[RMDB]
RNA sequence: GGGAACGACUCGAGUAGAGUCGAAAACUCAUUGCCUUCAGUGCGGAAGUGGUUUUCUCAACUCCAAUCAAAAAGGCAGAAAAAGUAAAGCAACGCGAUUUUCGCGCUGUUUUUUCGCUGCAUGCAACUGUCUUAGUAUCUUCGGAUACUAAGACAGAAAAGAAACAACAACAACAAC
Reactivity to 2A3 in 0.01 (KOAc 150mM, MgCl2 10mM, bicine 150mM(pH8.5), 24C), signal-to-noise 3, nucleotides 027 to 126: c010u010c010a050u050u100g000c010c000u020u010c040a020g010u000g040c020g000g010a130a080g030u040g070g070u060u070u170u120c110u020c040a020a050c010u000c000c010a020a000u010c010a010a050a020a000a030g020g010c000a000g000a000a080a000a000a000g150u090a000a030a000g000c000a000a000c000g000c010g040a050u070u040u240u300c020g000c000g000c000u000g030u040u020u000u010u020u090c060g020c050u110g060c060a100u150g030c020a030a060
Reactivity to DMS in 0.01 (KOAc 150mM, MgCl2 10mM, bicine 150mM(pH8.5), 24C), signal-to-noise 4, nucleotides 027 to 126: c010u000c040a160u010u000g010c020c000u010u000c060a300g010u000g010c300g000g000a050a040g010u000g000g000u010u000u010u020c120u010c040a050a020c010u010c010c000a020a210u000c020a010a110a050a030a010g010g010c000a010g010a070a070a070a060a120g020u000a030a040a020g000c000a010a030c000g000c000g010a160u010u010u020u010c010g020c000g010c000u000g020u010u000u000u000u010u000c100g010c040u000g010c170a070u000g010c050a070a170
Source: RMDB library RFMREP, as collected in RNAgym. The record gives the reactivity of an RNA of 177 nucleotides to 2A3 and DMS. For DMS, 2,919 sequencing reads were counted. For 2A3 the reverse transcriptase was SuperScript II with manganese. The reactions ran in a buffer of 150 mM KOAc, 10 mM MgCl2 and 150 mM bicine (pH 8.5), at 24 C.